[RMDB]
RNA sequence: GGGAACGACUCGAGUAGAGUCGAAAAAGGAGUGGAGCGACCUUAAACAGUUCUGGUGGUGCUCUGAAUGGAGUGCUCUACUGAGAUUAUAAAAUAGAAGGUAAGCUAUUAUCUCUUACAACAGGGCGAAGCACUCGGGGGUUCGCCCCCGAGUGAACUAUAUGUUUGUGUUCGCACAAACAUAUAGAAAAGAAACAACAACAACAAC
Reactivity to 2A3 in 0.01 (KOAc 150mM, MgCl2 10mM, bicine 150mM(pH8.5), 24C), signal-to-noise 4, nucleotides 027 to 156: a020g030g000a000g010u050g000g020a020g010c030g020a020c010c010u060u110a100a120a020c030a070g020u060u040c030u070g030g040u040g010g030u030g010c010u020c010u010g120a050a090u300g020g020a020g030u040g010c010u010c010u050a050c040u050g020a010g000a060u070u120a070u250a160a090a090a050u080a040g070a080a020g060g020u080a070a030g020c000u000a040u070u040a050u070c020u000c010u050u070a030c030a110a010c020a040g060g050g000c050g050a080a000g060c010a000c000u000c000g000g000g000g010g010u040u040c140g030c010c010c060c000c000g010a000g000u000g000a000a000
Reactivity to DMS in 0.01 (KOAc 150mM, MgCl2 10mM, bicine 150mM(pH8.5), 24C), signal-to-noise 1, nucleotides 027 to 156: a060g000g020a080g040u010g000g000a080g020c000g010a080c010c040u020u000a120a140a190c010a150g030u000u000c010u000g020g000u000g010g040u000g000c010u020c000u000g000a090a070u000g000g020a060g030u010g020c010u000c040u010a060c030u020g020a120g030a080u000u000a110u010a060a030a110a190u010a100g000a080a070g000g000u000a020a090g010c040u000a040u000u000a050u010c010u000c000u000u000a060c030a080a120c040a040g000g000g010c030g010a100a140g000c020a030c010u000c000g060g020g010g060g020u000u000c260g030c020c020c070c000c010g000a010g000u000g000a010a100